RNA sequence: GGGAACGACUCGAGUAGAGUCGAAAAGCUAUCAUUAAUUGAAGUUUGUAAGCCCGUGCCACAUCAAAACUCAACUUCAUUGUCUUACGCCACUUGUUGCUAUCCGCUUACUCUCCUCAAUAGCAACCUUCUUUCAAGUAUUCGUACUUGAAAGAAGAAAAGAAACAACAACAACAAC
Reactivity to DMS in 0.01 (KOAc 150mM, MgCl2 10mM, bicine 150mM(pH8.5), 24C), signal-to-noise 8, nucleotides 027 to 126: g010c020u000a080u000c030a050u000u000a100a130u010u000g010a040a040g000u000u000u000g010u010a130a180g000c020c020c030g010u010g000c030c050a050c050a050u010c090a060a050a080a080c090u010c060a030a040c060u000u010c040a060u000u000g010u000c040u010u000a070c120g010c030c040a040c120u010u000g010u000u000g010c010u000a050u000c060c070g000c070u000u000a080c100u000c050u000c010c020u000c090a070a050u000a050g000c060a050a070c100
Reactivity to 2A3 in 0.01 (KOAc 150mM, MgCl2 10mM, bicine 150mM(pH8.5), 24C), signal-to-noise 9, nucleotides 027 to 126: g000c010u060a070u300c020a070u160u280a300a120u140u090g020a030a020g020u030u060u050g070u100a060a020g040c020c010c020g010u030g010c020c010a070c010a050u090c050a040a060a060a080c050u060c050a020a050c020u080u030c030a050u040u080g040u030c030u050u060a030c050g020c030c010a040c040u040u050g030u030u020g020c000u020a040u050c040c030g010c030u020u040a060c020u030c010u000c050c010u030c020a030a050u030a030g000c010a020a040c010